The data come from the RNA Mapping Database (RMDB), library OK1LIB.
Structure probing data (2A3 and DMS) for a 177-nucleotide construct.
For 2A3, 18,065 sequencing reads were counted.
RNA sequence: GGGAACGACUCGAGUAGAGUCGAAAAAUGACUUGCCAGGUGGUUAUUGCCUACAGAGGUGGAUGCUGAUUGCUGCAGACUUGAAGUGCUUCGGAAACACUGCUGUCGCCAAAUGCAACCAACAACAAUACUAAGACGUGUUCGCACGUCUUAGUAUAAAAGAAACAACAACAACAAC
Reactivity to 2A3 in 0.01 (KOAc 150mM, MgCl2 10mM, bicine 150mM(pH8.5), 24C), signal-to-noise 9, nucleotides 027 to 126: a000u100g030a030c020u050u070g030c020c020a040g010g030u020g020g030u080u060a060u090u150g040c010c010u040a060c050a050g130a030g070g030u050g040g020a060u070g020c010u020g020a120u060u120g010c040u020g000c020a030g020a150c040u090u130g090a110a010g030u030g040c030u040u070c040g060g030a040a060a020c020a000c030u060g010c020u030g020u060c020g010c030c000a030a060a030u110g000c010a010a060c040c020a010a040c040a030a030c020a030
Reactivity to DMS in 0.01 (KOAc 150mM, MgCl2 10mM, bicine 150mM(pH8.5), 24C), signal-to-noise 9, nucleotides 027 to 126: a060u020g000a050c040u000u010g010c030c020a070g000g030u010g010g000u000u000a050u010u020g000c030c010u010a080c150a080g000a100g010g030u000g000g010a080u010g000c040u000g010a120u010u010g010c060u010g010c060a060g000a060c060u020u030g000a050a020g010u000g010c030u000u000c130g010g020a130a100a160c040a010c020u000g000c030u000g010u010c060g000c070c070a040a060a090u020g000c030a050a080c060c040a050a070c170a070a060c210a100